[RMDB]
This 207-nucleotide RNA was probed chemically with 2A3. 2A3 adducts were read by reverse transcription with SuperScript II with manganese. Reactivities are rounded to 0.1 and cut off at 0 and 3. Conditions: 150 mM KOAc, 10 mM MgCl2 and 150 mM bicine (pH 8.5), 24 C.

RNA sequence: GGGAACGACUCGAGUAGAGUCGAAAAAGCGUGCCGGUGCAGGCAACUGACCACCGUAAGCGUCGUUGCAAAUAGAUAAGCGCCGAUUCACAUCAGCGCGACUACGCUCUCGCUGCCUAAGCGACAGCUAGUCCGUCAGCCCGGGAACGCCCUCGACGGAGCGAUUUAAGUUCGCUUAAAUCGCUCCAAAAGAAACAACAACAACAAC
Reactivity to 2A3 in 0.01 (KOAc 150mM, MgCl2 10mM, bicine 150mM(pH8.5), 24C), signal-to-noise 1, nucleotides 027 to 156: a000g000c010g010u000g000c000c010g010g050u180g010c110a100g010g090c000a000a000c010u140g020a010c000c010a050c030c050g280u190a230a010g000c090g080u000c000g010u000u000g000c020a050a050a050u170a020g040a000u120a070a030g000c000g000c000c060g040a040u080u170c100a010c050a180u020c000a000g000c000g000c020g000a000c000u010a010c140g000c010u010c000u000c010g010c000u040g060c030c050u120a110a010g000c000g010a000c000a000g000c010u000a000g030u030c000c000g050u020c010a050g030c000c000c000g020g000g000a040a020c010g010c000c000c000u110c050g000a070c000